[RMDB]
RNA sequence: GGGAACGACUCGAGUAGAGUCGAAAACAUUAUUAUCCAAGCCAGCCGUCAAAACUGAGCUAUAAAAAUUAUCUUGUUUUUGGGUGAGGCGUAUUCAAAUCAGAAUGUGUCUCAAUAACACGAUGACAUUCGUCUAUCUAUUCGUAGAUAGACGAAUAAAAGAAACAACAACAACAAC
Reactivity to 2A3 in 0.01 (KOAc 150mM, MgCl2 10mM, bicine 150mM(pH8.5), 24C), signal-to-noise 7, nucleotides 027 to 126: c010a020u090u130a090u150u090a070u200c030c020a020a010g010c000c000a010g040c050c030g140u170c110a040a050a060a090c010u040g010a020g060c050u030a020u180a180a110a020a010a010u140u110a030u040c030u020u030g040u060u040u030u080u120g210g010g000u080g020a010g000g000c000g000u010a000u000u000c020a070a110a300u170c070a070g000a010a000u000g000u000g010u010c000u000c010a010a020u150a030a020c060a000c050g050a040u080g040a020c030
Reactivity to DMS in 0.01 (KOAc 150mM, MgCl2 10mM, bicine 150mM(pH8.5), 24C), signal-to-noise 5, nucleotides 027 to 126: c150a080u010u010a060u010u020a100u010c060c050a130a090g000c010c000a030g010c050c060g000u030c190a060a080a130a100c020u000g000a080g010c010u000a100u030a010a040a050a060a080u010u010a030u000c050u010u000g010u000u000u000u010u000g010g010g010u010g010a010g010g000c000g020u000a010u000u000c010a060a090a120u040c250a090g010a010a010u000g000u010g000u000c000u000c010a030a050u000a020a030c030a030c100g000a030u010g000a090c220